About this RNA
The record gives the reactivity of an RNA of 170 nucleotides to 2A3 and DMS. For 2A3 the reverse transcriptase was SuperScript II with manganese. The RNA was probed in 150 mM KOAc, 10 mM MgCl2 and 150 mM bicine (pH 8.5) at 24 C. The DMS profile rests on 9,557 reads.
[RMDB]
RNA sequence: GGGAACGACUCGAGUAGAGUCGAAAAAUUGUUGGGUGCACCCUGGGACCCAGUAAUGCCCGGGGGGAGGCGGGGUAAACCCAUACCAUGGGAACUGCUGGGUCCCUCGGAUGUCGAUCCCCUCUCCGUCACUACGCCUUCGGGCGUAGUAAAAGAAACAACAACAACAAC
Reactivity to 2A3 in 0.01 (KOAc 150mM, MgCl2 10mM, bicine 150mM(pH8.5), 24C), signal-to-noise 2, nucleotides 027 to 129: a020u180u090g100u060u050g000g010g040u020g000c010a070c010c000c000u010g000g000g000a000c000c020c000a030g000u070a060a060u120g020c000c010c030g000g000g000g020g000g100a080g040g170c070g000g000g000g000u060a130a090a070c000c000c000a000u110a060c040c080a030u160g000g000g040a000a000c040u030g010c000u010g000g040g000u010c030c000c000u000c000g000g000a030u000g080u020c040g010a100u050c030c030c000c000u010c050u000c000c050g080u090c020
Reactivity to DMS in 0.01 (KOAc 150mM, MgCl2 10mM, bicine 150mM(pH8.5), 24C), signal-to-noise 3, nucleotides 027 to 129: a070u050u010g000u040u020g030g000g040u000g040c040a100c050c040c070u000g000g050g030a000c060c000c000a020g020u010a010a150u020g030c000c000c000g030g010g010g010g010g000a100g040g060c120g000g000g000g000u050a080a110a160c060c000c020a160u050a090c150c080a070u030g010g000g050a020a010c210u040g000c000u030g010g010g000u000c000c030c000u000c070g050g010a140u020g010u030c130g010a070u010c020c020c000c030u000c010u030c040c070g060u000c180